[RMDB]
Source: RMDB library OK2TRN, as collected in RNAgym. The record gives the reactivity of an RNA of 177 nucleotides to 2A3 and DMS. DMS adducts were read by reverse transcription with MarathonRT. Values cover nucleotides 27 to 126. Reactivities are rounded to 0.1 and cut off at 0 and 3. The RNA was probed in 150 mM KOAc, 10 mM MgCl2 and 150 mM bicine (pH 8.5) at 24 C. For 2A3, 4,339 sequencing reads were counted.

RNA sequence: GGGAACGACUCGAGUAGAGUCGAAAAAAUCGUACGAACACGCCGGCUAUCUAUCAGACUCUCCGCUCACGUUGAGCGGUUCAUCGCCACCGGCAAGCGAUUCGGCAAUCUGCAGUGAUGAGUACACUGUUCUACUCCAAUUCGUUGGAGUAGAACAAAAAGAAACAACAACAACAAC
Reactivity to 2A3 in 0.01 (KOAc 150mM, MgCl2 10mM, bicine 150mM(pH8.5), 24C), signal-to-noise 4, nucleotides 027 to 126: a000a020u130c070g000u050a060c020g020a090a010c030a020c090g000c000c000g000g030c040u070a050u130c020u060a150u110c060a030g040a140c020u010c020u000c070c010g000c000u000c020a100c120g270u180u280g010a010g000c010g000g000u000u020c020a060u030c020g030c020c030a040c010c000g010g000c010a010a000g010c020g030a030u060u060c030g080g000c030a040a100u040c060u150g000c030a070g070u040g100a250u060g030a080g060u040a030c050a030c050
Reactivity to DMS in 0.01 (KOAc 150mM, MgCl2 10mM, bicine 150mM(pH8.5), 24C), signal-to-noise 4, nucleotides 027 to 126: a080a030u000c070g010u000a070c020g010a120a060c060a060c120g020c020c010g010g000c150u000a090u000c080u000a090u010c130a100g000a100c110u000c090u000c000c000g010c000u000c010a140c300g030u010u010g000a010g020c000g000g000u000u000c100a030u000c060g010c090c120a120c030c010g010g000c020a080a030g020c020g000a090u000u000c050g000g000c050a080a060u000c090u010g010c060a110g020u000g000a060u000g010a200g010u000a050c040a060c130